RNA sequence: GGGAACGACUCGAGUAGAGUCGAAAAAGAGGAGUAAACUAGCACAUCUUUCCGUACUACCCGGUGUGCUCAACGGAACAGGGUGUGAGUGGGCACCCCACAAGAGUGCCAAGAAUAAACACUGGCGCAGCUACUCAUUAUUCGUAAUGAGUAGCUGAAAAGAAACAACAACAACAAC
Reactivity to 2A3 in 0.01 (KOAc 150mM, MgCl2 10mM, bicine 150mM(pH8.5), 24C), signal-to-noise 7, nucleotides 027 to 126: a000g090a040g060g030a050g050u140a070a120a070c080u050a070g040c020a020c000a060u020c030u040u070u020c020c010g030u060a060c040u070a070c020c000c020g020g020u060g020u030g010c020u020c040a070a040c040g050g000a040a050c020a090g040g020g000u030g010u010g020a100g050u080g000g020g000c010a010c000c000c050c010a060c010a020a070g070a010g040u060g000c000c010a050a040g100a070a070u220a120a080a000c050a010c060u040g030g000c080g000
Reactivity to DMS in 0.01 (KOAc 150mM, MgCl2 10mM, bicine 150mM(pH8.5), 24C), signal-to-noise 9, nucleotides 027 to 126: a080g010a100g010g010a140g020u010a050a080a090c100u010a110g010c020a020c020a030u010c030u000u000u000c020c030g010u000a100c110u000a110c040c020c030g010g020u000g000u000g010c040u000c090a100a050c060g010g010a050a080c300a070g010g020g030u000g020u000g000a100g030u000g010g010g000c030a050c030c010c010c060a080c220a060a130g000a080g020u000g000c000c010a040a100g000a070a080u000a080a070a080c120a070c060u000g000g010c100g010